[RMDB]
RNA sequence: GGGAACGACUCGAGUAGAGUCGAAAAUCGAAAUCAUCGGGAGUGAUCCAGAUGACGGUCCUGCCAUGAGACCGCAACGAGAGCAUGUCGCAUCGGAUGGACUCGGGGAGUCGGCAGCUUGCCCCACUAAGGCAGACGUUGUUCGCAACGUCUGCAAGGGUACAGUAUGGUUCGCCAUACUGUACCCAAAAGAAACAACAACAACAAC
Reactivity to DMS in 0.01 (KOAc 150mM, MgCl2 10mM, bicine 150mM(pH8.5), 24C), signal-to-noise 1, nucleotides 027 to 156: u000c100g010a090a120a080u000c000a020u010c000g040g040g060a090g000u020g020a270u000c000c010a030g000a010u000g010a060c000g000g000u000c010c010u000g040c040c100a110u010g000a110g010a110c060c040g040c000a070a140c030g000a120g010a170g010c060a100u010g000u000c020g040c040a140u000c020g040g050a180u000g010g040a110c070u000c080g020g010g040g030a090g000u020c030g020g060c070a070g020c050u000u010g030c020c010c000c010a040c050u000a100a150g040g000c000a010g000a020c010g040u000u010g000u000u010c270g030c060a010a000c000g000u010c000u000g040c010a010a030
Reactivity to 2A3 in 0.01 (KOAc 150mM, MgCl2 10mM, bicine 150mM(pH8.5), 24C), signal-to-noise 3, nucleotides 027 to 156: u070c020g040a010a010a020u040c020a010u050c010g020g000g030a020g070u130g010a100u020c010c010a040g020a030u040g030a040c030g000g020u010c000c000u050g150c050c030a110u100g020a050g000a080c010c010g040c050a030a050c020g060a020g010a000g100c070a100u080g000u090c040g020c040a040u050c100g030g020a030u070g030g020a030c030u010c100g000g000g000g000a050g040u040c020g010g020c000a040g020c000u060u090g050c000c000c000c000a030c070u120a070a040g130g000c000a000g000a000c000g000u000u010g020u060u060c070g000c140a000a000c000g000u000c000u000g000c000a000a000

An RNA of 207 nucleotides, treated with DMS and 2A3 and read out base by base. 2A3 adducts were read by reverse transcription with SuperScript II with manganese. The reactions ran in a buffer of 150 mM KOAc, 10 mM MgCl2 and 150 mM bicine (pH 8.5), at 24 C. Source: RMDB library M2RFPK, as collected in RNAgym.